[RMDB]
RNA sequence: GGGAACGACUCGAGUAGAGUCGAAAAUUGGCCUGUUCGAUGAAGGCUGUGCAGACCCCCAAGGCAUGUGCGGCGCCUGCUGGACGUUUGAAGUUGCCUCCGCUGGUGAUCGUAGGCAUUGGCUCGGCCGAACUGAAAUCUUCGGAUUUCAGUUCGGAAAAGAAACAACAACAACAAC
Reactivity to DMS in 0.01 (KOAc 150mM, MgCl2 10mM, bicine 150mM(pH8.5), 24C), signal-to-noise 1, nucleotides 027 to 126: u010u000g030g020c020c010u000g010u000u000c120g020a130u000g010a090a050g000g010c040u020g040u010g000c090a090g010a180c030c010c110c010c040a110a070g000g010c100a020u000g020u010g010c030g000g020c050g000c030c010u000g000c030u010g020g010a030c150g000u010u000u000g010a110a150g010u000u000g000c030c030u000c020c020g010c020u000g010g000u000g050a080u090c030g000u010a040g000g010c020a050u000u000g010g000c050u010c110g020g000